[RMDB]
RNA sequence: GGGAACGACUCGAGUAGAGUCGAAAAGAGGCGGGCCUCCCGAUCCGAGGGGCCCGACCACCAAGUUUGGAAAGCACUCCGGCCCGAAGGGUUGAGUAGCUUCCAGAGGGAGACAUCCACACGGAGACGUUGAAUUACAGUUCGCUGUAAUUCAACGAAAAGAAACAACAACAACAAC
Reactivity to 2A3 in 0.01 (KOAc 150mM, MgCl2 10mM, bicine 150mM(pH8.5), 24C), signal-to-noise 1, nucleotides 027 to 126: g080a050g030g000c000g010g000g010c000c000u000c040c000c010g060a150u060c030c040g000a030g020g000g000g010c000c010c000g000a230c000c000a010c000c020a030a020g030u050u070u020g030g000a090a030a020g030c000a000c050u040c090c170g040g000c070c000c000g240a300a220g040g020g010u010u000g000a000g000u040a010g010c020u010u030c000c000a010g030a030g050g030g020a100g010a050c020a080u020c020c020a030c010a010c100g010g050a000g010a030
Reactivity to DMS in 0.01 (KOAc 150mM, MgCl2 10mM, bicine 150mM(pH8.5), 24C), signal-to-noise 1, nucleotides 027 to 126: g000a150g020g020c050g000g050g000c000c000u030c000c020c050g000a130u000c150c020g040a140g010g000g010g030c000c000c000g000a000c000c020a230c040c030a120a110g000u000u020u000g000g000a010a000a050g010c000a090c010u000c060c180g020g010c010c010c000g020a040a130g000g040g020u000u000g010a080g020u000a100g000c000u000u010c000c000a040g000a070g000g000g000a100g020a100c170a040u000c000c000a090c150a090c060g000g000a080g010a230
Notes: Structure probing data (2A3 and DMS) for a 177-nucleotide construct. For DMS the reverse transcriptase was MarathonRT. The reactions ran in a buffer of 150 mM KOAc, 10 mM MgCl2 and 150 mM bicine (pH 8.5), at 24 C.